[RMDB]
RNA sequence: GGGAACGACUCGAGUAGAGUCGAAAAAUCAGCCUUCGUUCUGUAAACGGGGUUGGAUCCGACUCUCAUAGGCUCUCCAACCCAACUCCUACUCAAUACGUCCUCGACGUACAGAACGGUAACAUGUAAAACGAAGGCUGCUUCGGCAGCCUUCGAAGCGUAAGAUCUACUUCGGUAGAUCUUACGCAAAAGAAACAACAACAACAAC
Reactivity to 2A3 in 0.01 (KOAc 150mM, MgCl2 10mM, bicine 150mM(pH8.5), 24C), signal-to-noise 1, nucleotides 027 to 156: a000u080c010a010g070c000c010u030u090c010g000u000u010c000u000g020u040a010a030a160c020g070g020g000g000u100u010g000g000a030u220c000c000g020a070c020u080c010u040c110a170u170a130g030g000c000u020c000u000c040c020a010a030c000c000c010a000a000c030u070c010c010u080a050c000u030c100a090a160u050a070c000g010u000c040c220u160c160g000a000c000g000u010a000c010a010g040a010a000c000g020g000u050a040a050c070a100u100g070u220a030a090a040a000c020g000a000a000g000g030c010u000g000c000u010u000c040g080g000c000a000g000c000c000u000u010c000g000a000a000